The record gives the reactivity of an RNA of 207 nucleotides to DMS and 2A3.
For 2A3, 4,283 sequencing reads were counted.
DMS adducts were read by reverse transcription with MarathonRT.
Conditions: 150 mM KOAc, 10 mM MgCl2 and 150 mM bicine (pH 8.5), 24 C.
[RMDB]
RNA sequence: GGGAACGACUCGAGUAGAGUCGAAAAGAUUCGCCGUCGGCAUUUCCCCAGCAGCCAUGACCUACCAGGCUGCGGUGCGGCUCGCCGAACAGGUCAUCCCUCAUCGGGCGCGUCCUGCGUCCUUCCAAAAACUGACUAACCUUCGGGUUAGUCAGAACUAUAGAAUAGAGUUCGCUCUAUUCUAUAGAAAAGAAACAACAACAACAAC
Reactivity to DMS in 0.01 (KOAc 150mM, MgCl2 10mM, bicine 150mM(pH8.5), 24C), signal-to-noise 2, nucleotides 027 to 156: g020a120u000u000c040g010c000c020g040u000c040g050g000c020a270u010u000u000c030c010c030c000a070g020c010a050g030c010c020a210u000g000a110c130c110u010a140c150c070a200g030g000c000u000g000c010g000g020u010g010c060g030g000c240u000c100g000c010c000g000a060a070c030a100g020g010u000c040a090u000c010c010c010u000c100a100u010c110g000g010g000c000g020c000g010u000c100c020u000g020c010g020u000c000c000u000u010c030c000a050a060a080a130a180c000u000g010a010c000u010a000a000c000c000u000u000c300g080g020g000u000u000a000g010u000c000a000g000a010a110
Reactivity to 2A3 in 0.01 (KOAc 150mM, MgCl2 10mM, bicine 150mM(pH8.5), 24C), signal-to-noise 5, nucleotides 027 to 156: g040a130u100u110c040g000c020c010g010u010c010g020g000c010a040u060u070u140c000c010c010c000a060g010c000a000g000c010c020a180u100g080a190c030c070u160a130c090c060a050g000g000c010u000g000c010g000g010u090g010c080g020g010c060u050c050g000c010c000g010a030a030c010a020g020g030u060c030a070u040c020c020c010u070c050a180u160c060g010g000g000c000g000c030g050u280c050c120u120g000c000g010u000c010c000u040u110c020c020a020a060a030a100a100c000u000g000a000c000u000a000a000c000c000u020u040c180g060g000g000u000u000a000g000u000c000a000g000a000a000

Background:
The DMS profile rests on 4,603 reads. Reactivities are rounded to 0.1 and cut off at 0 and 3. For 2A3 the reverse transcriptase was SuperScript II with manganese.